[RMDB]
RNA sequence: GGGAACGACUCGAGUAGAGUCGAAAAAUACUUCUCAGGAUGGCGCGUUGCAGUCCAACAAGAUCCAGGGACUGUACAGAAUUUUCCUAUACCUCGAGUCGGGUUUGGCAUCUAAGGUUGACUCGCUAAAACUUUACGUGGUUCGCCACGUAAAGAACUACUUAUGAGUGUUCGCACUCAUAAGUAGAAAAGAAACAACAACAACAAC
Reactivity to DMS in 0.01 (KOAc 150mM, MgCl2 10mM, bicine 150mM(pH8.5), 24C), signal-to-noise 2, nucleotides 027 to 156: a140u000a050c060u000u000c030u000c060a120g010g010a060u000g020g010c090g010c100g040u010u010g010c020a050g010u020c030c010a040a140c050a110a270g000a070u000c050c020a170g020g000g000a030c070u000g010u010a080c090a140g010a080a140u020u010u000u000c020c020u010a130u000a050c080c020u010c020g010a070g000u000c020g010g010g020u000u010u000g010g030c040a090u000c060u000a100a090g000g020u010u000g020a040c040u000c040g030c080u020a020a050a180a140c000u000u000u000a010c000g050u010g020g020u000u000c300g060c020c000a020c000g010u000a000a000a020g010a050a080
Reactivity to 2A3 in 0.01 (KOAc 150mM, MgCl2 10mM, bicine 150mM(pH8.5), 24C), signal-to-noise 3, nucleotides 027 to 156: a000u120a050c020u050u040c030u010c040a010g050g010a040u050g010g060c050g000c050g120u110u070g000c010a000g010u000c020c000a070a050c070a120a160g130a130u110c080c060a040g000g040g000a000c000u020g020u030a020c020a030g110a140a080u080u030u040u050c000c000u060a080u070a110c020c020u010c020g010a000g000u000c020g000g000g000u060u070u050g050g000c040a040u040c070u120a090a080g100g000u030u060g030a040c010u000c030g000c030u050a050a070a050a080c000u010u000u000a000c000g000u010g000g060u040u060c160g040c060c000a000c000g000u000a000a000a000g000a000a010